An RNA of 207 nucleotides, treated with 2A3 and read out base by base. Conditions: 150 mM KOAc, 10 mM MgCl2 and 150 mM bicine (pH 8.5), 24 C. Source: RMDB library OK3TST, as collected in RNAgym. The 2A3 profile rests on 996 reads.
RNA sequence: GGGAACGACUCGAGUAGAGUCGAAAAAAGUAACCUCACCAGGACGUGCCAAAGACAGGUCAGCGAGGGAAGGGACUGUGGAAGCAAGGUAAGGGGAGGUGAAGUUGUAGUGGAAUUUGGGAGGUGCUUACUGAUCUUCUUGCAGGCCCUACAAAUAGUUUUAAUGCGAGUUCGCUCGCAUUAAAACAAAAGAAACAACAACAACAAC
Reactivity to 2A3 in 0.01 (KOAc 150mM, MgCl2 10mM, bicine 150mM(pH8.5), 24C), signal-to-noise 2, nucleotides 027 to 156: a000a000g110u100a070a090c020c000u020c030a050c010c050a020g040g060a030c030g100u040g050c080c050a120a100a050g060a150c040a040g000g070u030c040a040g050c040g050a020g010g010g030a010a000g010g000g030a020c020u010g020u000g000g050a020a000g040c060a050a030g040g040u060a020a070g000g040g000g010a050g000g040u060g030a050a070g030u080u120g070u080a130g040u080g030g040a110a100u210u130u030g030g000g030a010g020g040u060g030c020u110u070a040c000u020g070a080u040c020u010u020c010u040u220g000c000a010g020g040c010c030c000u020a000c020a000a050a020u100a040